[RMDB]
This 207-nucleotide RNA was probed chemically with 2A3 and DMS. Values cover nucleotides 27 to 156. For DMS, 2,810 sequencing reads were counted. For 2A3, 6,808 sequencing reads were counted. Source: RMDB library RNAMAK, as collected in RNAgym. For 2A3 the reverse transcriptase was SuperScript II with manganese.

RNA sequence: GGGAACGACUCGAGUAGAGUCGAAAAUCCUAAGUCGAGUUUGAGUGAUUUGCCAGGCGAAGAACUGUCUCGGAAACGAGACAGGGAGCCUGGUGAUCACAAUGAUGACUCGAUAUGGAAAAAGUCCUGUAUGCGACUUCGGUCGCAUACAGGACAACCAAUGAUAUGUGUUCGCACAUAUCAUUGGAAAAGAAACAACAACAACAAC
Reactivity to 2A3 in 0.01 (KOAc 150mM, MgCl2 10mM, bicine 150mM(pH8.5), 24C), signal-to-noise 5, nucleotides 027 to 156: u030c000c000u020a080a020g020u000c000g000a000g000u000u000u050g050a010g000u010g020a040u070u090u300g020c010c000a000g000g010c020g140a260a020g020a070a040c000u000g000u000c010u000c000g040g020a110a090a080c010g000a000g030a020c000a030g000g000g000a000g000c030c020u000g000g000u000g000a000u010c000a000c000a000a020u090g020a030u090g000a000c000u000c000g000a000u010a080u090g050g060a070a130a020a050a030g020u020c010c000u000g000u000a010u000g000c000g010a000c020u040u130c300g070g000u000c000g000c000a000u000a000c000a000g000g000a000c000a000a000
Reactivity to DMS in 0.01 (KOAc 150mM, MgCl2 10mM, bicine 150mM(pH8.5), 24C), signal-to-noise 1, nucleotides 027 to 156: u000c010c000u000a070a190g010u000c000g010a010g020u010u010u010g000a110g020u000g000a010u000u000u000g050c040c000a020g010g000c020g000a120a150g030a090a140c000u000g020u010c000u010c010g000g020a110a030a300c000g000a020g050a020c020a050g000g000g010a280g020c000c000u000g070g050u010g000a000u000c000a010c010a130a040u020g020a110u000g030a020c000u010c000g010a030u000a190u010g020g000a090a050a110a190a160g030u030c010c010u000g020u000a000u000g000c000g010a060c020u000u000c300g090g060u000c000g000c000a010u000a000c010a010g000g000a010c000a010a030